RNA sequence: GGGAACGACUCGAGUAGAGUCGAAAAGAUAUGGACCUCUCGAUAAGUCCGUAUCGGAAACGAUACAGGACUUUUGACGAGACGUCCUAAGUCAAAAGUUUCUCCAGUGUUCGCACUGGAGAAACAACAACAAUUAGUCGUUCGCGACUAAUUGUUGAAAAGAAACAACAACAACAAC
Reactivity to 2A3 in 0.01 (KOAc 150mM, MgCl2 10mM, bicine 150mM(pH8.5), 24C), signal-to-noise 3, nucleotides 027 to 126: g000a020u030a010u080g000g000a000c010c010u000c000u000c000g030a070u030a300a040g000u000c010c000g000u000a000u010c000g010g010a080a020a000c010g000a000u010a010c120a250g000g000a000c000u050u030u080u040g080a030c000g000a000g010a010c010g010u000c000c000u000a050a010g030u020c010a040a010a030a170g000u000u010u000c000u000c000c000a010g010u010g070u100u200c280g050c110a010c000u010g000g010a010g000a000a000a000c000a000a000
Reactivity to DMS in 0.01 (KOAc 150mM, MgCl2 10mM, bicine 150mM(pH8.5), 24C), signal-to-noise 5, nucleotides 027 to 126: g010a020u000a150u010g000g000a010c010c120u000c000u010c000g010a070u010a030a020g020u000c000c000g000u000a010u010c010g010g000a030a040a060c010g010a010u000a000c010a100g040g000a010c000u000u000u000u010g000a280c060g000a020g010a010c160g010u000c000c000u000a000a080g000u010c020a120a080a120a160g000u000u000u000c000u000c000c000a010g020u000g010u000u010c230g010c010a000c000u000g000g000a000g000a000a000a010c000a090a170